[RMDB]
RNA sequence: GGGAACGACUCGAGUAGAGUCGAAAAGAUAUGGACCACUCUUUUGACGCUCGCGUUUCGGAAACGAAACGGCGAGCGAUAAGAGUGUCCUAAGUCAAAGCAUACUAGGGUUCGCCCUAGUAUGCAAUCAUUCGCGUAGGUUCGCCUACGCGAAUGAAAAAGAAACAACAACAACAAC
Reactivity to 2A3 in 0.01 (KOAc 150mM, MgCl2 10mM, bicine 150mM(pH8.5), 24C), signal-to-noise 1, nucleotides 027 to 126: g010a020u060a050u080g020g000a030c070c070a020c100u000c020u130u120u120u250g280a140c160g020c000u000c000g020c030g000u030u000u000c010g010g060a040a070a050c000g050a010a010a000c000g060g120c020g000a000g010c000g010a000u000a000a010g000a010g020u020g000u000c000c000u020a130a020g020u040c070a160a160a020g000c000a010u000a000c000u020a010g010g070g000u010u100c180g210c000c000c000u000a000g000u000a000u010g000c000a000a000
Reactivity to DMS in 0.01 (KOAc 150mM, MgCl2 10mM, bicine 150mM(pH8.5), 24C), signal-to-noise 1, nucleotides 027 to 126: g000a030u020a300u000g010g000a040c150c170a010c000u000c000u000u000u000u000g000a260c100g000c000u000c000g030c000g020u000u000u000c000g010g000a060a040a150c010g000a010a000a050c010g060g020c000g000a000g020c020g010a000u010a000a020g000a030g000u010g010u000c000c000u000a010a180g000u010c030a100a080a110g000c000a000u000a000c000u010a010g000g010g040u000u000c300g000c000c000c010u000a030g000u000a010u000g000c000a010a000

An RNA of 177 nucleotides, treated with 2A3 and DMS and read out base by base. Conditions: 150 mM KOAc, 10 mM MgCl2 and 150 mM bicine (pH 8.5), 24 C. 2A3 adducts were read by reverse transcription with SuperScript II with manganese. For DMS, 1,193 sequencing reads were counted.